[RMDB]
Conditions: 150 mM KOAc, 10 mM MgCl2 and 150 mM bicine (pH 8.5), 24 C. The record gives the reactivity of an RNA of 207 nucleotides to 2A3 and DMS. For DMS, 1,856 sequencing reads were counted. For 2A3 the reverse transcriptase was SuperScript II with manganese.
RNA sequence: GGGAACGACUCGAGUAGAGUCGAAAAAGCCUACGGACACAGGAGCAUGCUCAUGGGCAAGACCACCAUGCACACUCAGAGGGGAGCCACAAGGCAACCUCCACGCCACUCAGAUUUGUAGGGCUCUGAACACAUACACCAGGUACAGACCACCUAACUACCAUAAUUAGUUCGCUAAUUAUGGUAGAAAAGAAACAACAACAACAAC
Reactivity to 2A3 in 0.01 (KOAc 150mM, MgCl2 10mM, bicine 150mM(pH8.5), 24C), signal-to-noise 5, nucleotides 027 to 156: a000g050c030c000u050a050c070g020g030a020c000a000c020a170g030g040a050g010c040a030u060g020c030u020c060a060u020g000g000g010c070a090a030g060a090c030c030a020c050c000a040u060g010c030a030c000a010c030u080c030a020g020a080g060g010g010g020a010g030c000c010a130c070a140a090g040g000c020a060a140c000c010u020c020c010a060c060g030c000c000a080c020u060c040a040g020a190u030u170u170g060u110a040g000g010g020c000u010c010u030g090a100a020c060a010c010a100u150a030c050a040c050c030a030g020g020u060a030c040a020g080a040c030c030a040c060c040u050a040a060
Reactivity to DMS in 0.01 (KOAc 150mM, MgCl2 10mM, bicine 150mM(pH8.5), 24C), signal-to-noise 1, nucleotides 027 to 156: a100g040c030c010u000a170c040g010g000a070c030a080c090a090g000g030a130g030c040a120u010g000c030u000c030a060u000g000g000g100c010a100a050g000a230c010c000a200c060c060a040u000g020c060a070c090a060c040u020c020a170g000a210g030g000g040g050a300g040c020c030a030c060a130a110g020g000c010a090a150c010c000u010c010c000a050c020g010c010c030a060c030u000c010a090g020a080u000u000u000g000u010a010g030g010g050c040u000c050u000g030a080a030c110a070c050a130u000a020c030a040c060c000a090g010g010u010a080c050a070g010a050c010c010a130c040c010u010a030a120